Overview
Structure probing data (DMS and 2A3) for a 177-nucleotide construct. The 2A3 profile rests on 1,381 reads.
RNA sequence: GGGAACGACUCGAGUAGAGUCGAAAAAGCAGCGACGGCGGAGCAUCCGGGACGCGGAGGACAUGGUCACGCACCACACGCUACAGCAGUACCUGUACAAGCCGCGGCAGGAGGUGGGCACUGCGGGCCCUCGCUUAGAGUUCGCUCUAAGCGAGGGAAAAGAAACAACAACAACAAC
Reactivity to DMS in 0.01 (KOAc 150mM, MgCl2 10mM, bicine 150mM(pH8.5), 24C), signal-to-noise 2, nucleotides 027 to 126: a100g020c060a050g030c020g010a060c100g000g000c040g020g010a140g010c080a070u000c050c020g000g030g020a080c070g000c020g000g000a090g010g020a070c060a070u010g010g000u010c130a130c160g000c050a120c050c040a070c090a080c140g000c030u000a040c050a060g000c090a100g010u010a040c080c010u010g000u000a070c090a060a090g020c020c020g020c030g010g010c040a070g010g010a040g000g050u010g010g020g020c100a050c070u000g000c000g010g000g000
Reactivity to 2A3 in 0.01 (KOAc 150mM, MgCl2 10mM, bicine 150mM(pH8.5), 24C), signal-to-noise 1, nucleotides 027 to 126: a020g050c050a000g000c020g090a040c030g080g070c030g000g020a020g010c010a050u060c040c010g000g050g030a030c010g010c050g050g030a030g030g020a010c030a060u120g010g000u080c060a040c190g040c050a030c060c010a040c030a000c080g020c050u110a050c050a050g000c030a050g040u050a040c020c000u030g000u030a050c030a150a020g040c010c000g060c040g040g010c020a050g020g010a040g030g040u090g030g010g000c040a020c050u030g000c000g020g000g070

The reactions ran in a buffer of 150 mM KOAc, 10 mM MgCl2 and 150 mM bicine (pH 8.5), at 24 C. Values cover nucleotides 27 to 126. The data come from the RNA Mapping Database (RMDB), library OK2TST. For DMS, 1,430 sequencing reads were counted.